[RMDB]
RNA sequence: GGGAACGACUCGAGUAGAGUCGAAAACGUCCACAUCGACAUCGGAGGAGGCACUACCGAUGUGGUGGUGUAUCUGGGUGGAGCGCCGUACCUCACGGGAGCCAUCCCCAUAGGGGCCUCCCAGGUGAGAGUGAAUGUGGUUCGCCACAUUCACUCUAAAAGAAACAACAACAACAAC
Reactivity to 2A3 in 0.01 (KOAc 150mM, MgCl2 10mM, bicine 150mM(pH8.5), 24C), signal-to-noise 2, nucleotides 027 to 126: c040g060u030c030c000a020c010a080u060c060g170a030c000a030u030c020g060g030a060g030g010a070g100g080c110a060c090u120a160c060c020g080a060u050g030u030g000g030u030g010g030u090g030u030a160u040c040u060g000g110g000u040g040g020a070g030c050g060c030c050g080u180a160c020c020u080c040a030c030g000g020g000a040g000c010c020a150u060c000c000c010c020a080u260a110g010g040g000g020c000c000u000c010c020c000a040g060g020u060g020
Reactivity to DMS in 0.01 (KOAc 150mM, MgCl2 10mM, bicine 150mM(pH8.5), 24C), signal-to-noise 2, nucleotides 027 to 126: c150g000u000c020c010a080c030a040u000c070g010a060c070a010u010c030g020g020a160g010g010a170g000g000c050a130c030u000a090c040c010g020a080u000g030u000g000g000u000g000g020u000g020u010a080u020c040u000g010g010g030u000g010g010a080g020c060g030c020c050g000u010a090c050c030u010c100a110c090g010g010g000a070g000c090c130a070u010c000c000c010c050a190u010a070g010g020g000g000c300c000u000c000c000c000a070g000g000u000g000
About this RNA
The record gives the reactivity of an RNA of 177 nucleotides to 2A3 and DMS. High 2A3 reactivity points to a flexible backbone, as in loops and unpaired stretches. The DMS profile rests on 1,652 reads. The 2A3 profile rests on 1,606 reads. Conditions: 150 mM KOAc, 10 mM MgCl2 and 150 mM bicine (pH 8.5), 24 C. It was measured as part of the RMDB library OK2TRN. DMS adducts were read by reverse transcription with MarathonRT.